Structure probing data (2A3) for a 207-nucleotide construct.
As a SHAPE reagent, 2A3 marks flexible, mostly unpaired nucleotides at the ribose 2'-OH.

[RMDB]
RNA sequence: GGGAACGACUCGAGUAGAGUCGAAAAAUGGUCUUGCCUGGAUUUUGGUACAUUUUCAGCACUUUAACUGGUCUUCUAUUUAAUUGGUUGACAUAUAUUCAAUUAAUUGCUCCAAAUCUGUCACUAUUAAGAAUAUUAUUCAUCGCAAUCCAGCCUACCAUUUAUGGUCGUUCGCGACCAUAAAUGGAAAAGAAACAACAACAACAAC
Reactivity to 2A3 in 0.01 (KOAc 150mM, MgCl2 10mM, bicine 150mM(pH8.5), 24C), signal-to-noise 3, nucleotides 027 to 156: a000u060g000g010u060c050u050u080g030c010c030u040g040g000a010u000u000u040u120g000g020u080a010c010a050u120u040u000u100c040a020g060c020a050c080u170u100u100a100a000c040u070g030g000u000c020u010u000c010u070a170u080u150u070a100a100u070u010g010g020u010u040g030a020c020a020u140a020u030a030u110u090c020a020a030u010u080a030a060u010u070g030c040u010c040c040a110a090a150u000c020u040g120u110c040a010c040u060a060u160u110a080a030g020a070a060u060a030u230u010a050u070u090c040a030u050c010g000c070a010a010u010c020c010a000g010c010c000u010a030
Annotation:
It was measured as part of the RMDB library OK3TST. For 2A3, 1,244 sequencing reads were counted. Conditions: 150 mM KOAc, 10 mM MgCl2 and 150 mM bicine (pH 8.5), 24 C.